RNA sequence: GGGAACGACUCGAGUAGAGUCGAAAAUGCAAACUCAAGUUAUGUGGAGUUCUAGGACUUAGACUUAUGGAUGGAACAUGGGUCGCGAUGCAAACAUCAAAUGAAACCAAAUGGUGCCCUCCCGGUCCAAUACCUCCAUGUUCGCAUGGAGGUAUUGAAAAGAAACAACAACAACAAC
Reactivity to DMS in 0.01 (KOAc 150mM, MgCl2 10mM, bicine 150mM(pH8.5), 24C), signal-to-noise 7, nucleotides 027 to 126: u010g010c100a090a060a110c060u000c060a090a090g010u010u010a050u040g020u020g010g020a050g010u010u000c060u020a070g010g000a070c070u010u010a070g010a040c040u000u020a080u030g000g000a100u030g010g000a080a130c050a040u010g000g010g000u010c030g020c080g010a060u010g010c120a060a060a130c070a030u020c060a020a060a120u030g000a090a090a100c090c060a030a060a130u020g000g020u000g010c010c010c020u000c020c010c030g010g000u010c070
Reactivity to 2A3 in 0.01 (KOAc 150mM, MgCl2 10mM, bicine 150mM(pH8.5), 24C), signal-to-noise 9, nucleotides 027 to 126: u110g000c020a030a020a080c010u020c050a070a110g100u170u140a150u180g160u160g080g010a040g030u050u040c040u080a070g040g060a040c010u080u090a030g030a030c000u050u040a020u110g070g020a070u100g050g050a060a030c010a030u020g000g000g020u030c020g020c060g050a010u030g020c050a030a080a060c020a040u070c050a040a050a120u200g070a130a040a020c050c010a030a090a110u120g050g000u050g020c030c000c000u030c000c010c010g010g000u030c020